[RMDB]
Structure probing data (2A3 and DMS) for a 207-nucleotide construct.
Values cover nucleotides 27 to 156.
The RNA was probed in 150 mM KOAc, 10 mM MgCl2 and 150 mM bicine (pH 8.5) at 24 C.
2A3 is a SHAPE reagent: it acylates the 2'-hydroxyl of flexible nucleotides of all four kinds.
It was measured as part of the RMDB library OK3TST.
RNA sequence: GGGAACGACUCGAGUAGAGUCGAAAACCACUGUUCCCGUGCACACACGGAUAUUUGAAGGCAUCAGUGAAAAGGAUGCAGGGUAAACAUGAAGCAGAGGACACGGUGGGUUGGCAGAUGUGGGCUGGGUCCUGGAAGCUCACAUGGACCUGGAAGACUAAUUUAAAUGAUUCGUCAUUUAAAUUAGAAAAGAAACAACAACAACAAC
Reactivity to 2A3 in 0.01 (KOAc 150mM, MgCl2 10mM, bicine 150mM(pH8.5), 24C), signal-to-noise 3, nucleotides 027 to 156: c010c010a020c070u050g040u060u060c000c000c000g040u030g010c080a070c020a010c000a010c120g050g010a040u010a150u090u100u160g110a100a040g060g020c010a010u000c010a060g070u030g150a090a080a010a040g090g010a010u020g010c020a030g030g020g000u090a090a070a010c060a100u110g040a050a000g010c060a020g030a020g050g000a020c030a000c120g020g030u020g000g000g040u040u040g030g000c030a030g010a100u050g040u050g040g000g000c010u020g000g010g040u010c010c000u020g010g020a020a020g000c010u010c000a050c010a040u060g010g010a040c010c010u010g020g030a030a020g050a010
Reactivity to DMS in 0.01 (KOAc 150mM, MgCl2 10mM, bicine 150mM(pH8.5), 24C), signal-to-noise 3, nucleotides 027 to 156: c000c010a110c090u010g030u000u000c000c000c030g070u010g010c050a120c100a140c060a090c030g000g010a110u000a090u000u000u000g020a110a120g030g020c050a050u000c030a070g010u000g010a080a080a090a170g030g010a080u000g000c010a120g010g030g030u000a060a060a090c040a110u010g000a200a090g010c030a100g020a130g010g010a040c050a050c060g020g030u000g010g010g020u000u000g010g020c050a060g020a070u000g020u000g010g010g060c010u000g020g000g020u020c030c020u000g030g000a160a060g010c020u000c020a040c040a040u010g010g000a040c020c010u000g020g000a060a130g010a210